[RMDB]
RNA sequence: GGGAACGACUCGAGUAGAGUCGAAAACGUGGACGUGUUGUAUUUUGUGGGUCAAAAGCCUAUGAAGCAACGGCGGCACGCGGACACAGACUAAAAAAUAACUUUCACGAUUAUGAAAAUAAACAUGCCAUACCGUACAGUUCGCUGUACGGUAUGGAAAAGAAACAACAACAACAAC
Reactivity to DMS in 0.01 (KOAc 150mM, MgCl2 10mM, bicine 150mM(pH8.5), 24C), signal-to-noise 2, nucleotides 027 to 126: c050g050u000g010g000a030c050g000u000g000u000u000g000u000a130u070u020u000u030g050u000g000g020g000u000c020a110a070a060a260g020c000c010u000a000u000g000a010a050g000c060a020a000c000g000g000c000g000g010c000a040c050g010c050g000g030a130c070a110c100a230g000a120c100u010a000a010a070a060a130a070u020a020a060c170u000u010u000c030a030c110g010a030u030u030a080u010g000a090a090a020a040u000a090a100a050c190a090u020g000
Reactivity to 2A3 in 0.01 (KOAc 150mM, MgCl2 10mM, bicine 150mM(pH8.5), 24C), signal-to-noise 7, nucleotides 027 to 126: c010g000u050g080g260a030c020g030u050g020u020u020g000u010a230u040u030u000u020g010u010g000g010g020u130c040a040a020a080a000g000c000c000u010a010u020g010a020a000g000c010a010a000c000g050g010c000g030g020c030a000c010g020c020g060g010a020c040a000c020a110g150a060c120u230a060a030a020a020a040a030u190a090a010c050u040u130u130c070a060c100g120a160u110u090a080u210g110a050a040a030a070u220a030a110a040c050a040u140g020
An RNA of 177 nucleotides, treated with DMS and 2A3 and read out base by base. DMS adducts were read by reverse transcription with MarathonRT. The RNA was probed in 150 mM KOAc, 10 mM MgCl2 and 150 mM bicine (pH 8.5) at 24 C.